[RMDB]
An RNA of 177 nucleotides, treated with DMS and 2A3 and read out base by base. Source: RMDB library OK1LIB, as collected in RNAgym. Values cover nucleotides 27 to 126.
RNA sequence: GGGAACGACUCGAGUAGAGUCGAAAAUCGCGGUAACGGCGUGUCACCCAUGCUGAGUUCGGCCGGUGGGGCCGCUGAGUCGAUCGCGCAGAUCACGCCGUCGGCGGGCGCGACAAUGGCAGCCGGCGCCGGGGAGAGGAUUCGUCCUCUCCCCGGCAAAAGAAACAACAACAACAAC
Reactivity to DMS in 0.01 (KOAc 150mM, MgCl2 10mM, bicine 150mM(pH8.5), 24C), signal-to-noise 1, nucleotides 027 to 126: u030c050g000c050g000g040u000a080a070c080g010g000c000g070u000g030u050c110a090c080c090c050a080u000g020c040u000g000a120g020u030u030c060g000g090c000c080g000g000u000g050g020g010g040c030c070g010c020u040g030a140g000u000c030g000a110u000c040g000c080g000c070a130g000a100u080c120a070c000g000c070c000g060u000c110g000g000c000g020g000g030c000g010c010g000a060c130a100a030u020g000g080c000a220g040c050c000g010g000c020
Reactivity to 2A3 in 0.01 (KOAc 150mM, MgCl2 10mM, bicine 150mM(pH8.5), 24C), signal-to-noise 2, nucleotides 027 to 126: u070c010g000c030g020g050u050a090a010c050g050g040c100g030u060g090u060c030a120c040c000c000a110u130g000c050u060g000a090g130u060u110c040g060g000c000c050g030g000u080g040g100g050g000c000c010g000c010u000g020a020g070u060c040g060a040u030c010g000c060g030c050a000g010a180u130c110a000c030g030c020c060g100u100c090g010g000c000g000g040g020c000g000c000g000a020c090a000a020u100g000g000c000a000g020c000c000g060g000c050

Values are in units of 0.01, from 0 to 300, in steps of 10. For DMS, 1,639 sequencing reads were counted.